Structure probing data (2A3 and DMS) for a 177-nucleotide construct. For DMS the reverse transcriptase was MarathonRT. For DMS, 740 sequencing reads were counted. For 2A3, 933 sequencing reads were counted. Source: RMDB library RFMREP, as collected in RNAgym. The RNA was probed in 150 mM KOAc, 10 mM MgCl2 and 150 mM bicine (pH 8.5) at 24 C.

RNA sequence: GGGAACGACUCGAGUAGAGUCGAAAAGGGCUAACAUUGGGUGAAUUGCAUGAAAGCUAAGGCGUAACGCUAUGCUAACCUGCAGCGAAUUACAUCGACUGAUAUUAAUAUAAAAAUAGAUGUACACCACGUGUUGUAUCUUCGGAUACAACACGUGAAAAGAAACAACAACAACAAC
Reactivity to 2A3 in 0.01 (KOAc 150mM, MgCl2 10mM, bicine 150mM(pH8.5), 24C), signal-to-noise 1, nucleotides 027 to 126: g030g010g000c050u030a050a010c050a030u040u060g030g000g050u010g030a060a070u120u060g000c000a000u010g000a080a020a000g010c030u080a180a150g030g000c040g030u050a120a010c090g000c010u040a040u060g020c030u010a050a010c010c000u030g000c020a000g080c040g070a030a040u130u010a030c000a010u010c010g020a000c010u030g020a020u020a040u230u270a120a130u300a030u140a250a050a070a000a000u090a030g010a030u010g000u020a030c000a000c030
Reactivity to DMS in 0.01 (KOAc 150mM, MgCl2 10mM, bicine 150mM(pH8.5), 24C), signal-to-noise 2, nucleotides 027 to 126: g010g000g040c000u000a050a050c080a030u000u010g000g000g010u000g010a080a170u000u000g000c000a010u000g000a100a220a050g000c000u030a070a190g020g000c020g010u020a140a050c150g000c040u000a300u000g000c040u000a050a280c050c040u000g020c020a020g000c080g030a040a140u010u000a050c000a010u000c000g000a170c150u000g000a190u000a060u010u000a060a160u060a100u010a040a040a050a010a070u010a080g000a070u000g030u000a010c300a050c230